Background:
Structure probing data (2A3 and DMS) for a 170-nucleotide construct. The reactions ran in a buffer of 150 mM KOAc, 10 mM MgCl2 and 150 mM bicine (pH 8.5), at 24 C. The DMS profile rests on 49,848 reads.
[RMDB]
RNA sequence: GGGAACGACUCGAGUAGAGUCGAAAACCGGCUGUUCUUCUUUCUCUUUCGUCGUCAUCCUUGGCUAGCCUCUGGAGUUCCUCUUCUUCCUCUUGGCUGAGGCGCUUUCCUCCUCCGGCCAGCUGCUAUAGAGAUUCGUUCGCGAAUCUCAAAAGAAACAACAACAACAAC
Reactivity to 2A3 in 0.01 (KOAc 150mM, MgCl2 10mM, bicine 150mM(pH8.5), 24C), signal-to-noise 9, nucleotides 027 to 129: c000c000g020g000c070u060g020u080u040c010u030u020c000u020u070u020c030u010c000u020u050u030c030g050u010c020g030u020c030a060u050c040c010u060u040g050g000c040u040a020g020c010c000u040c040u050g040g020a050g030u050u040c010c000u020c020u050u010c010u050u030c040c010u020c020u080u070g050g000c050u040g040a040g050g000c030g020c030u060u060u040c000c010u000c000c010u020c010c000g020g000c010c010a020g010c030u080g020c020u090a080u120a220
Reactivity to DMS in 0.01 (KOAc 150mM, MgCl2 10mM, bicine 150mM(pH8.5), 24C), signal-to-noise 6, nucleotides 027 to 129: c000c010g040g020c090u020g030u000u000c050u010u000c050u000u030u040c000u020c020u010u010u020c000g000u030c090g050u000c050a070u040c080c050u030u020g000g000c080u030a050g040c040c000u040c010u000g040g020a140g040u010u000c080c010u020c050u010u010c060u020u040c020c000u020c070u030u030g010g030c060u030g000a120g000g020c270g020c090u000u000u000c040c020u030c000c000u030c000c000g010g010c020c000a000g020c020u000g030c040u000a090u070a140